[RMDB]
RNA sequence: GGGAACGACUCGAGUAGAGUCGAAAAAAUAUUUCUGAAUUGCGCCUUUACCUUCGGGUACAUGACCUUUGCGCAUUUUCAGUCAACCAAUCGCGUGGCGCUCACUAUGGGAGCGGUAGUCGCACUCCUUUACCGGUGUUUUCGAACACCGGUAAAGAAAAGAAACAACAACAACAAC
Reactivity to 2A3 in 0.01 (KOAc 150mM, MgCl2 10mM, bicine 150mM(pH8.5), 24C), signal-to-noise 2, nucleotides 027 to 126: a020a000u240a060u070u100u050c020u000g020a010a000u030u000g000c000g000c030c000u030u040u030a020c000c040u050u030c210g070g000g010u030a030c110a170u030g090a170c000c040u200u150u130g000c010g000c000a020u080u010u030u050c000a010g050u020c000a010a040c040c030a050a160u230c090g010c020g030u050g110g010c010g000c000u010c010a090c060u150a300u300g190g000g000a000g000c070g030g070u030a030g140u000c010g000c030a010c040u040c030
Reactivity to DMS in 0.01 (KOAc 150mM, MgCl2 10mM, bicine 150mM(pH8.5), 24C), signal-to-noise 1, nucleotides 027 to 126: a040a100u010a090u000u000u010c000u000g000a040a030u020u000g000c010g040c000c020u000u000u000a000c000c000u000u010c240g050g010g000u010a000c110a010u000g000a180c270c140u000u000u000g030c000g010c000a010u000u000u000u000c000a000g020u020c230a070a170c010c020a060a040u010c210g020c000g050u010g020g010c020g000c010u000c000a100c080u000a130u000g000g020g000a020g020c010g010g000u000a040g010u000c030g020c010a170c200u000c070

Source: RMDB library OK2TRN, as collected in RNAgym. Chemical mapping of a 177-nucleotide RNA with 2A3 and DMS. Values are in units of 0.01, from 0 to 300, in steps of 10. The DMS profile rests on 959 reads.